[RMDB]
RNA sequence: GGGAACGACUCGAGUAGAGUCGAAAAGUCCCCACUUUCGAGUGGGGACAAUCAAAGUAUUGGCACUCGCAGCCCGCAGCGUUGGUGCUCCCACGCGGUGCAUAACUGCCUACUUCGGUAGGCAGAAACCAAAUGAUCUGUUCGCAGAUCAUUUGGUAAAAGAAACAACAACAACAAC
Reactivity to DMS in 0.01 (KOAc 150mM, MgCl2 10mM, bicine 150mM(pH8.5), 24C), signal-to-noise 3, nucleotides 027 to 126: g010u000c000c000c000c000a000c000u000u000u030c150g010a010g030u000g010g000g010g010a000c000a010a060u010c140a100a100a110g010u010a090u010u000g010g000c020a050c020u010c060g010c060a100g000c020c010c030g020c080a050g000c030g010u000u000g030g020u000g010c060u000c010c010c020a120c140g010c020g000g000u000g000c070a080u010a060a190c010u010g000c000c000u000a010c000u000u010c150g040g020u000a000g010g010c000a000g000a030a060
Reactivity to 2A3 in 0.01 (KOAc 150mM, MgCl2 10mM, bicine 150mM(pH8.5), 24C), signal-to-noise 4, nucleotides 027 to 126: g010u000c010c000c010c010a000c020u110u100u080c230g100a010g010u020g010g010g000g000a010c010a010a010u110c030a000a010a090g080u120a090u190u190g060g000c010a020c030u070c060g000c030a020g010c000c010c040g010c030a070g000c030g080u140u120g050g040u120g020c030u090c000c000c000a050c030g000c040g020g050u040g010c010a050u120a240a100c000u010g000c000c000u000a000c000u020u040c150g120g000u000a000g010g010c000a000g000a030a000
About this RNA: An RNA of 177 nucleotides, treated with DMS and 2A3 and read out base by base. As a SHAPE reagent, 2A3 marks flexible, mostly unpaired nucleotides at the ribose 2'-OH. For 2A3, 4,920 sequencing reads were counted. The reactions ran in a buffer of 150 mM KOAc, 10 mM MgCl2 and 150 mM bicine (pH 8.5), at 24 C.